[RMDB]
RNA sequence: GGGAACGACUCGAGUAGAGUCGAAAAAGGAAGGGAAGGAAUGUGACCGAGGCCGGGUGUGGCUCAGCAGAGUGCAGCCAGUUGUGGGUUUUUCUUGGGGCCGAGAUAGACGUGAGCAGAGAUGGAGACCUUACUCAAAAUUCGUUUUGAGUAAGGUAAAAGAAACAACAACAACAAC
Reactivity to DMS in 0.01 (KOAc 150mM, MgCl2 10mM, bicine 150mM(pH8.5), 24C), signal-to-noise 9, nucleotides 027 to 126: a070g010g010a080a060g000g000g010a080a060g000g010a080a060u020g010u010g000a090c060c050g010a130g000g000c040c060g020g000g010u000g020u010g000g010c030u010c060a100g020c090a100g010a080g010u010g010c060a080g010c030c030a070g010u010u010g010u010g000g000g000u000u010u010u010u010c030u010u000g000g000g000g000c030c020g000a100g000a080u010a060g000a060c070g010u000g000a080g010c060a070g000a080g010a090u010g010g010a130g010
Reactivity to 2A3 in 0.01 (KOAc 150mM, MgCl2 10mM, bicine 150mM(pH8.5), 24C), signal-to-noise 9, nucleotides 027 to 126: a000g080g030a030a020g040g010g020a050a030g050g040a080a070u130g040u080g080a040c020c040g030a060g010g040c040c010g010g030g000u070g020u040g040g000c000u020c060a030g040c020a020g040a030g080u090g010c020a000g040c010c010a020g010u040u050g020u070g030g040g000u050u040u000u040u010c030u020u070g010g000g000g000c000c010g010a030g010a040u100a020g040a020c050g030u040g020a010g020c050a010g020a010g010a070u080g030g020a050g010